The record gives the reactivity of an RNA of 207 nucleotides to DMS and 2A3. The 2A3 profile rests on 1,315 reads. It was measured as part of the RMDB library OK3TST.
RNA sequence: GGGAACGACUCGAGUAGAGUCGAAAACUCUUUUACUAGUGACUCUUUUGUGUGCACUAUGUAGUGCUGUUUUGUAUGACAGUAGUUCUUACGUUUACUACUACCAAAGUGCCUUCAGACCACCUAGUGGUUGGCAUUUACAAGGGGGUGCUUAUGCCGCGUAAUACAUUUUCGAAUGUAUUACGCGAAAAGAAACAACAACAACAAC
Reactivity to DMS in 0.01 (KOAc 150mM, MgCl2 10mM, bicine 150mM(pH8.5), 24C), signal-to-noise 2, nucleotides 027 to 156: c050u000c030u000u000u000u000a020c030u000a040g020u000g010a070c030u010c050u010u010u010u010g010u010g070u000g020c030a040c020u010a060u010g050u000a080g030u020g030c030u010g000u000u020u010u000g030u000a060u020g000a090c040a040g030u000a030g000u000u000c070u000u000a170c160g020u010u000u000a050c010u010a020c020u000a130c050c050a130a110a110g020u010g010c000c020u010u000c060a250g010a040c020c000a030c020c070u000a190g030u010g040g000u010u020g040g000c010a060u000u000u000a090c080a060a130g010g020g000g010g040u010g030c020u010u000a110u000g000c070
Reactivity to 2A3 in 0.01 (KOAc 150mM, MgCl2 10mM, bicine 150mM(pH8.5), 24C), signal-to-noise 3, nucleotides 027 to 156: c030u050c010u040u170u040u090a060c060u020a000g050u030g190a180c020u020c020u140u120u090u160g150u050g030u050g010c020a000c040u020a040u300g070u060a030g030u010g000c030u020g060u070u070u090u070g140u030a090u150g060a040c060a080g030u030a010g020u130u080c030u080u220a050c100g080u060u090u060a020c040u000a020c000u000a040c040c070a110a010a010g020u010g020c000c030u050u100c080a090g030a160c010c000a010c000c110u100a050g040u020g050g010u000u060g040g000c010a050u080u140u090a050c040a040a070g030g000g000g000g030u000g000c010u070u050a060u180g120c050